[RMDB]
RNA sequence: GGGAACGACUCGAGUAGAGUCGAAAAUCACGAUUAGAUGUCCGCACAACUCCGGACUCGCGGUGAGCGAUACAGCGCAGCGCGAGCAUCGCAGCUGCUGUGCGGACGGCUAGCAAGGGCUAGCCACACUAGUGGAUGGUUUCGACCAUCCACUAGUAAAAGAAACAACAACAACAAC
Reactivity to 2A3 in 0.01 (KOAc 150mM, MgCl2 10mM, bicine 150mM(pH8.5), 24C), signal-to-noise 7, nucleotides 027 to 126: u080c020a050c130g120a100u100u220a110g110a150u200g020u000c000c000g020c000a010c000a060a200c020u060c080c000g040g010a050c010u010c010g000c000g110g140u050g000a050g000c000g100a100u150a300c170a090g030c010g000c040a030g100c010g000c000g010a010g020c030a120u080c010g000c040a030g010c030u240g030c020u000g000u000g000c000g020g000a000c000g000g000c000u000a010g000c030a160a210g160g150g000c010u000a000g010c000c010a010c000
Reactivity to DMS in 0.01 (KOAc 150mM, MgCl2 10mM, bicine 150mM(pH8.5), 24C), signal-to-noise 4, nucleotides 027 to 126: u040c050a130c150g020a110u050u030a110g010a050u020g020u000c000c000g060c000a020c010a040a050c020u000c230c030g000g000a180c030u000c000g010c010g020g000u010g000a110g000c000g020a220u050a160c270a100g010c000g050c010a020g000c000g000c000g000a030g030c100a080u010c000g000c110a110g000c160u000g000c080u020g000u010g010c000g000g010a010c010g000g000c010u000a000g000c000a190a130g000g010g000c000u000a010g020c010c030a030c220
An RNA of 177 nucleotides, treated with 2A3 and DMS and read out base by base. It was measured as part of the RMDB library OK1LIB. 2A3 adducts were read by reverse transcription with SuperScript II with manganese. High 2A3 reactivity points to a flexible backbone, as in loops and unpaired stretches. DMS adducts were read by reverse transcription with MarathonRT. The RNA was probed in 150 mM KOAc, 10 mM MgCl2 and 150 mM bicine (pH 8.5) at 24 C.